[RMDB]
RNA sequence: GGGAACGACUCGAGUAGAGUCGAAAAGAAAACCGCAGUUGGCUAGCCGAAAGAAAGAGGCUUAAAGCCAACGAAAUAAGUCGGAAAGCACGACCGACAAGAAAAGCCCUACAAUCGUGCAAGAAAACACGUACUACCUCUUCGGAGGUAGUACGUGAAAAGAAACAACAACAACAAC
Reactivity to 2A3 in 0.01 (KOAc 150mM, MgCl2 10mM, bicine 150mM(pH8.5), 24C), signal-to-noise 1, nucleotides 027 to 126: g120a050a040a000a000c060c180g100c010a020g000u000u000g000g000c000u020a000g000c000c000g070a180a060a000g300a050a090a060g220a090g000g000c050u100u060a240a040a000g000c000c000a000a000c000g000a000a000a000u190a030a150g000u000c000g000g000a300a100a000g000c020a020c040g000a040c000c000g000a000c000a000a000g170a000a160a000a000g030c000c000c000u050a120c000a110a000u100c000g020u000g000c010a000a050g040a000a030a000a020
Reactivity to DMS in 0.01 (KOAc 150mM, MgCl2 10mM, bicine 150mM(pH8.5), 24C), signal-to-noise 2, nucleotides 027 to 126: g010a040a060a060a080c050c220g010c160a150g010u000u010g000g020c000u010a020g030c000c000g040a220a170a070g060a080a120a110g020a300g000g030c000u000u030a060a000a030g000c000c000a000a000c000g020a070a010a090u060a090a110g030u000c000g000g000a080a040a050g020c000a000c050g010a080c000c000g000a010c010a100a160g020a070a030a010a070g000c060c000c000u090a070c210a080a030u000c020g000u000g000c020a150a030g050a180a030a120a030
The record gives the reactivity of an RNA of 177 nucleotides to 2A3 and DMS. High 2A3 reactivity points to a flexible backbone, as in loops and unpaired stretches. For DMS, 1,852 sequencing reads were counted.